[RMDB]
RNA sequence: GGGAACGACUCGAGUAGAGUCGAAAAAGGGAUAGGUCGAGCUUGCGUUGCGAGCCGAGGGGUCGGCCUCGUAAAAACGCACAAGCCAAUAACUGGCAAAGAAAACAACAACUUCGCUCUAGCUGCAUAAGCUAAGCGGUCUCUCCUCUCCAUCGCCGUAAACGGCAGAGUUCGCUCUGCCGUUUACAAAAGAAACAACAACAACAAC
Reactivity to 2A3 in 0.01 (KOAc 150mM, MgCl2 10mM, bicine 150mM(pH8.5), 24C), signal-to-noise 3, nucleotides 027 to 156: a000g080g000g010a020u070a030g000g050u070c090g030a020g020c060u080u050g010c020g110u080u060g000c010g000a000g000c010c000g020a040g000g050g010g090u160c000g000g040c050c020u010c000g000u080a210a070a000a000a000c000g030c000a040c040a040a060g000c000c030a050a040u170a150a090c200u070g010g000c030a090a050a000g120a050a170a040a010c050a020a000c010a050a050c070u080u060c050g010c010u000c050u060a020g000c010u060g020c040a100u110a300a030g000c010u010a000a020g010c010g030g000u000c000u000c000u010c000c000u030c000u000c020c030a100u140c080g040c120c050
An RNA of 207 nucleotides, treated with 2A3 and read out base by base. The reactions ran in a buffer of 150 mM KOAc, 10 mM MgCl2 and 150 mM bicine (pH 8.5), at 24 C.